[RMDB]
RNA sequence: GGGAACGACUCGAGUAGAGUCGAAAAGCAGUAGUGUUCGCACUACUGCAAAAAAAAAGAGGUGCUAGCUACACCCUCUAUAAGCAAAGAUCGAAAGAUCAAAAACAUGCUACUUCGGUAGCAUGAACAUGAUCUAAGUCUUCGGACUUAGAUCAUGAAAAGAAACAACAACAACAAC
Reactivity to DMS in 0.01 (KOAc 150mM, MgCl2 10mM, bicine 150mM(pH8.5), 24C), signal-to-noise 2, nucleotides 027 to 126: g020c000a010g030u000a000g020u000g020u000u000c250g010c000a010c000u000a000c010u000g000c000a000a000a000a000a030a000a030a080a000g030a060g000g000u000g020c010u010a140g010c140u000a160c020a080c060c000c040u000c000u000a070u010a080a070g000c150a090a020a110g010a000u000c000g000a080a050a100g000a000u010c000a050a050a100a100a190c010a000u000g000c000u000a000c000u000u010c170g000g010u000a010g010c000a000u000g000a030a150
Reactivity to 2A3 in 0.01 (KOAc 150mM, MgCl2 10mM, bicine 150mM(pH8.5), 24C), signal-to-noise 1, nucleotides 027 to 126: g010c000a000g000u020a000g000u010g020u090u110c250g050c070a000c000u000a010c000u000g000c000a000a060a000a020a000a000a000a000a000g000a030g020g000u040g020c030u050a050g030c030u100a010c000a020c060c170c000u000c010u000a200u030a030a040g060c060a180a100a000g000a030u000c020g030a060a000a000g030a010u050c050a070a060a000a000a000c000a000u010g030c000u000a000c000u030u000c150g030g000u000a000g000c000a000u000g000a000a000

This 177-nucleotide RNA was probed chemically with DMS and 2A3. For 2A3, 1,811 sequencing reads were counted. The reactions ran in a buffer of 150 mM KOAc, 10 mM MgCl2 and 150 mM bicine (pH 8.5), at 24 C. For DMS, 1,579 sequencing reads were counted. It was measured as part of the RMDB library M2PK50.